[RMDB]
RNA sequence: GGGAACGACUCGAGUAGAGUCGAAAAAGGGAACUUCCGCUUCGGACCGAGGGCAGUAGGCUCUCGGCUCCUGGUCCCACUGCUGCUCAGCCCAGUGGCCUCACAGGACACCAGCUUCCCAGGUGAGGACGGGGCUUGGCGCCUGGGGGAGGCUGGCCACGGAUUGAAGGUUCGCCUUCAAUCCGUGAAAAGAAACAACAACAACAAC
Reactivity to 2A3 in 0.01 (KOAc 150mM, MgCl2 10mM, bicine 150mM(pH8.5), 24C), signal-to-noise 1, nucleotides 027 to 156: a000g110g010g020a050a110c070u160u100c040c070g070c100u030u070c130g010g020a010c040c000g000a000g050g010g000c060a120g200u300a090g090g270c020u000c010u020c020g000g000c030u000c010c000u020g000g000u020c000c030c000a060c020u030g010c020u020g010c000u010c130a010g000c010c010c010a040g040u060g070g080c000c010u050c000a190c000a050g050g060a060c010a060c060c000a020g000c000u100u080c000c020c020a010g090g070u090g040a100g030g040a020c090g000g000g000g000c000u000u040g020g010c030g000c020c020u020g000g010g030g030g000a030g000g030c000u010g050g000c010